Structure probing data (DMS and 2A3) for a 177-nucleotide construct. The DMS profile rests on 704 reads. Values cover nucleotides 27 to 126. For 2A3, 1,162 sequencing reads were counted. The reactions ran in a buffer of 150 mM KOAc, 10 mM MgCl2 and 150 mM bicine (pH 8.5), at 24 C.
[RMDB]
RNA sequence: GGGAACGACUCGAGUAGAGUCGAAAAAAAAAGAGCGUAAUCGCGUCAUUGAGUGACGUGAUGAUCAUCCAAGUGUGCUGUCUACAGUCGUAGAUAGCGCACAAUACGCUGAUGAUCAUUCAAAAAAGUCCUCAAACUGGUUCGCCAGUUUGAGGACAAAAGAAACAACAACAACAAC
Reactivity to DMS in 0.01 (KOAc 150mM, MgCl2 10mM, bicine 150mM(pH8.5), 24C), signal-to-noise 1, nucleotides 027 to 126: a060a090a010a000a180g020a130g030c050g000u010a130a010u000c040g000c000g020u000c030a090u000u010g030a150g010u000g000a010c010g070u010g000a000u000g020a000u000c020a010u000c010c140a070a120g010u000g000u000g050c000u030g000u020c000u000a000c030a140g000u010c220g000u000a010g000a020u000a000g010c000g000c000a000c000a030a090u030a090c210g000c210u000g000a010u000g000a030u000c010a130u000u040c100a010a030a060a060a100a090
Reactivity to 2A3 in 0.01 (KOAc 150mM, MgCl2 10mM, bicine 150mM(pH8.5), 24C), signal-to-noise 1, nucleotides 027 to 126: a000a000a000a000a020g120a020g020c080g040u020a040a040u010c000g020c010g010u000c000a030u090u300g120a100g190u090g010a000c000g010u040g000a000u020g000a000u010c000a010u000c010c020a120a120g010u000g000u010g000c010u010g000u000c000u020a080c090a250g130u240c160g000u120a000g000a000u000a010g010c000g000c000a000c000a010a000u070a020c010g020c060u030g000a000u020g000a000u010c040a040u140u140c120a110a050a000a000a050a010